[RMDB]
RNA sequence: GGGAACGACUCGAGUAGAGUCGAAAAGCAUACAACUUCGGUUGUAUGCAACGACAGUGUUGACUGUCAUAAACAACGUAACAUGUGAGUUACAAUAACACAUUGCAGCAGCUUUCGAGCUGCUGAAUAGUAACUAAAGAUUCGUCUUUAGUUACUAAAAAGAAACAACAACAACAAC
Reactivity to DMS in 0.01 (KOAc 150mM, MgCl2 10mM, bicine 150mM(pH8.5), 24C), signal-to-noise 9, nucleotides 027 to 126: g010c000a000u000a000c000a000a000c000u000u010c200g030g010u000u000g010u000a000u000g010c000a030a040c150g010a020c010a010g010u000g020u010u010g010a070c000u000g000u000c020a130u010a080a090a100c130a070a080c170g000u000a030a030c030a130u010g020u010g010a170g010u000u000a040c070a130a080u010a050a070c130a060c180a080u000u010g010c000a010g000c000a010g000c000u000u000u010c170g010a010g010c000u000g010c000u000g000a020a050
Reactivity to 2A3 in 0.01 (KOAc 150mM, MgCl2 10mM, bicine 150mM(pH8.5), 24C), signal-to-noise 9, nucleotides 027 to 126: g000c000a000u000a000c000a010a000c010u030u080c180g110g000u010u000g000u010a000u000g000c000a010a000c040g000a000c000a000g010u050g150u300u300g200a060c000u000g000u010c000a000u160a020a130a010c060a020a040c090g030u040a020a000c020a050u160g130u090g290a110g050u050u040a010c020a020a040u170a090a030c100a000c030a130u090u300g030c000a010g000c000a000g000c000u080u060u200c230g100a010g000c000u000g000c000u000g000a000a000